[RMDB]
RNA sequence: GGGAACGACUCGAGUAGAGUCGAAAAGAAGAUAAGGAUCGUGCAUUGGGUCGUUUCAGCCUCCGCUCGCUCACGAAAAUUCCAACUGAAACUAAACAUGUAGAAAGCAUAUUGAUUCCAUGUUUGGACGAGGGUUCAAUUCCCUCCAGCUCCACCAUCUAUCAGUCAUGUUCGCAUGACUGAUAGAAAAAGAAACAACAACAACAAC
Reactivity to DMS in 0.01 (KOAc 150mM, MgCl2 10mM, bicine 150mM(pH8.5), 24C), signal-to-noise 2, nucleotides 027 to 156: g020a090a120g010a100u000a100a130g050g000a060u000c040g020u000g000c070a200u000u020g000g000g060u000c040g020u000u000u010c020a120g020c000c010u010c030c010g020c010u000c040g030c010u010c050a040c030g000a050a030a050a190u010u000c010c010a030a110c000u010g000a060a020a050c010u000a070a050a040c020a020u010g050u000a110g010a090a140a170g020c040a040u000a060u000u000g000a130u000u000c000c010a050u000g010u020u000u000g000g010a070c110g020a050g000g010g010u020u010c100a030a300u000u020c000c000c020u000c010c000a070g000c050u000c020c010a070c000c010a140
Reactivity to 2A3 in 0.01 (KOAc 150mM, MgCl2 10mM, bicine 150mM(pH8.5), 24C), signal-to-noise 6, nucleotides 027 to 156: g070a030a010g020a050u080a100a050g050g020a030u040c040g020u040g030c060a110u090u210g040g000g000u050c040g010u030u040u060c050a030g010c010c010u050c020c030g020c020u040c010g010c010u030c020a060c040g040a050a040a020a050u100u040c030c000a050a020c070u070g040a080a020a030c000u020a030a010a010c010a010u020g020u060a070g050a040a080a030g100c060a090u120a120u280u260g070a100u090u000c010c000a000u010g030u010u020u020g040g010a020c040g000a010g000g010g030u040u080c020a010a010u080u060c000c010c010u010c020c010a010g000c020u050c020c010a060c030c010a030